[RMDB]
RNA sequence: GGGAACGACUCGAGUAGAGUCGAAAAGGCGCUGGGGAAGCGGGGCGCGUAUCGACGCCUCCUAGUCCAUGCUGCUGUGAGGCGACUGCGUGGUUGGUCCUUGGCGGUAUCCGGAGCCGAAUGAGAAGUACACUCGCAUUUUCGAAUGCGAGUGUACAAAAGAAACAACAACAACAAC
Reactivity to DMS in 0.01 (KOAc 150mM, MgCl2 10mM, bicine 150mM(pH8.5), 24C), signal-to-noise 1, nucleotides 027 to 126: g020g010c030g010c010u000g000g000g000g030a120a230g030c140g000g000g000g020c030g030c020g030u000a080u010c100g020a170c010g020c020c020u000c000c050u000a050g020u000c050c050a090u000g020c090u000g000c030u010g020u040g010a150g000g000c030g000a110c020u020g010c070g000u000g020g040u010u000g000g000u020c010c030u000u000g000g010c030g000g020u010a150u000c030c010g010g000a120g020c000c020g000a100a120u010g000a100g000a140a100
Reactivity to 2A3 in 0.01 (KOAc 150mM, MgCl2 10mM, bicine 150mM(pH8.5), 24C), signal-to-noise 1, nucleotides 027 to 126: g020g000c030g000c040u010g000g010g000g060a070a000g040c030g050g010g040g040c090g000c010g020u080a110u300c130g110a120c010g000c000c000u000c000c010u030a030g050u090c090c040a170u260g010c030u050g030c030u060g040u090g020a020g000g000c030g010a060c080u050g030c000g040u090g030g090u080u130g060g040u010c010c010u000u030g200g000c030g000g020u030a080u050c030c000g000g010a010g040c040c000g010a060a080u220g040a090g000a190a030